[RMDB]
RNA sequence: GGGAACGACUCGAGUAGAGUCGAAAAGCGUACUACCACAUGGGAGGUACAUUGUCAGAGCCGAAGGCCUCCCAAAUAGGAGGUGUUGACGGCUCUUGGAUUUAUGUACCGACGAUCAUGUGGUAUCGCAAAAGGCGUAAAGUUCGCUUUACGCCAACAUAAAAGAACUCUUCGGAGUUCUUUUAUGAAAAGAAACAACAACAACAAC
Reactivity to DMS in 0.01 (KOAc 150mM, MgCl2 10mM, bicine 150mM(pH8.5), 24C), signal-to-noise 2, nucleotides 027 to 156: g000c040g050u000a070c130u010a030c000c000a030c000a050u010g000g000g010a090g010g010u010a000c010a000u000u000g010u010c010a090g020a070g000c000c000g040a300a260g020g010c010c000u000c000c010c010a000a070a130u000a030g000g020a020g030g010u000g030u000u000g010a300c040g010g000c000u000c000u000u000g020g020a090u020u000u000a010u000g000u000a010c010c000g000a080c150g000a050u000c000a050u000g000u000g020g010u000a000u010c000g000c030a040a050a070a110g000g020c000g020u000a010a010a020g000u000u000c300g010c040u000u010u000a000c010g040c000c000a010a040
Reactivity to 2A3 in 0.01 (KOAc 150mM, MgCl2 10mM, bicine 150mM(pH8.5), 24C), signal-to-noise 2, nucleotides 027 to 156: g020c010g030u090a060c090u000a000c010c000a010c010a000u000g020g030g030a050g020g010u030a000c000a040u040u040g020u050c030a010g000a000g010c060c040g070a090a030g140g020c090c030u010c100c010c030a070a050a010u240a020g000g000a010g010g010u040g140u140u120g150a140c000g000g000c000u000c000u000u050g070g010a000u030u110u300a040u030g020u010a000c010c000g040a010c000g010a020u010c000a000u000g000u000g010g010u010a000u020c000g000c000a000a040a050a180g000g000c000g010u010a000a000a000g030u060u150c260g010c090u000u000u010a000c000g000c000c000a020a000